This 177-nucleotide RNA was probed chemically with 2A3 and DMS. The DMS profile rests on 1,386 reads. Values cover nucleotides 27 to 126. Conditions: 150 mM KOAc, 10 mM MgCl2 and 150 mM bicine (pH 8.5), 24 C. 2A3 adducts were read by reverse transcription with SuperScript II with manganese. Source: RMDB library TTRDEL, as collected in RNAgym.

RNA sequence: GGGAACGACUCGAGUAGAGUCGAAAAGAUAUGGAGAAACGCAACAGCAUGUCGUCGGAAACGACGAAUCAUGACAUGCGUUCUCCUAAGUCAAAGUAACCGGAUUCGUUCGCGAAUCCGGUUACAAGAUUCGUAUACCCUUCGGGGUAUACGAAUCAAAAGAAACAACAACAACAAC
Reactivity to 2A3 in 0.01 (KOAc 150mM, MgCl2 10mM, bicine 150mM(pH8.5), 24C), signal-to-noise 2, nucleotides 027 to 126: g020a010u030a030u080g010g010a010g000a090a180a010c010g010c010a050a110c060a280g130c010a010u010g000u040c000g000u010c010g040g020a060a010a000c030g000a000c020g020a040a030u300c000a010u010g210a190c010a070u030g000c000g000u000u000c000u010c010c000u000a060a020g020u010c050a190a030a030g010u010a000a000c030c000g000g000a000u020u020c030g070u060u150c270g000c000g230a000a000u010c010c030g020g020u000u000a000c000a000a000
Reactivity to DMS in 0.01 (KOAc 150mM, MgCl2 10mM, bicine 150mM(pH8.5), 24C), signal-to-noise 2, nucleotides 027 to 126: g000a060u000a300u000g000g030a020g000a090a000a000c000g010c000a020a130c230a140g000c020a010u000g000u000c000g020u010c010g000g000a070a090a140c000g010a000c000g030a030a020u000c040a010u010g000a100c130a240u000g000c010g000u000u000c000u000c000c000u000a010a070g020u000c010a100a070a180g010u000a000a000c010c010g000g000a020u000u000c000g030u000u020c210g040c000g010a010a000u020c000c010g000g010u000u000a000c000a090a080